Structure probing data (2A3) for a 207-nucleotide construct.
[RMDB]
RNA sequence: GGGAACGACUCGAGUAGAGUCGAAAACAGCAGCCUGGCACGCCCAGCUCAGAGAAUACCUGUUCUUUGCUGGGGCCCGCAGGGAGCCAGGUAUCAGGACAGAUUUCUGAGACACGAAAGGUGCAGGUCUCCAGCUCCCGCUUGGCUGGGCCUGUGACCAUCCUGAAAAUUUCGAUUUUCAGGAUGGAAAAGAAACAACAACAACAAC
Reactivity to 2A3 in 0.01 (KOAc 150mM, MgCl2 10mM, bicine 150mM(pH8.5), 24C), signal-to-noise 1, nucleotides 027 to 156: c020a000g080c020a020g020c000c000u000g020g000c040a040c090g150c000c000c000a000g050c020u020c110a040g000a000g030a110a100u160a230c030c050u200g070u060u040c010u060u010u060g020c000u000g000g000g040g010c020c060c010g080c070a080g020g010g110a000g010c020c000a020g010g000u000a090u070c010a000g030g010a020c040a040g100a090u070u080u000c010u080g050a030g080a030c000a010c140g080a140a070a010g060g040u140g080c010a010g020g010u050c060u000c130c000a020g010c010u110c000c050c050g070c110u130u200g010g010c000u000g000g000g000c000c000u000g000u000g010a000

The data come from the RNA Mapping Database (RMDB), library OK3TST. Conditions: 150 mM KOAc, 10 mM MgCl2 and 150 mM bicine (pH 8.5), 24 C.